[RMDB]
RNA sequence: GGGAACGACUCGAGUAGAGUCGAAAAAUAUCGCCGGUGCCUCGUCGGACACCAAGGGGCACGUGAGGCUUAGCGGUACCAUCACACUUGGCGGUGUCGGCUUCAUUCAAACAUGGUGAGCCUUGGCCUAGUACCUGUGUUUCGACACAGGUACUAGAAAAGAAACAACAACAACAAC
Reactivity to DMS in 0.01 (KOAc 150mM, MgCl2 10mM, bicine 150mM(pH8.5), 24C), signal-to-noise 4, nucleotides 027 to 126: a150u010a050u000c070g000c000c030g000g020u000g010c010c010u010c040g000u010c100g000g000a080c100a070c060c030a190a130g010g010g010g010c020a020c030g010u020g010a070g020g010c080u000u000a070g010c060g000g000u000a040c030c020a050u000c050a090c160a080c190u010u000g020g010c080g000g010u000g020u000c040g010g000c020u000u000c040a060u020u010c110a090a060a100c170a070u010g000g000u010g010a050g010c030c010u000u000g000g020c110
Reactivity to 2A3 in 0.01 (KOAc 150mM, MgCl2 10mM, bicine 150mM(pH8.5), 24C), signal-to-noise 5, nucleotides 027 to 126: a010u120a030u060c050g020c040c010g040g020u020g010c000c000u030c010g080u030c050g100g040a080c010a030c050c020a020a040g020g010g000g010c010a000c010g010u040g060a050g040g000c030u020u060a080g010c020g010g020u030a040c010c020a070u060c040a060c040a030c110u110u180g050g000c020g040g010u020g020u030c020g020g010c040u100u070c040a070u160u150c060a050a140a130c070a150u140g040g010u050g030a020g010c010c020u030u090g050g040c000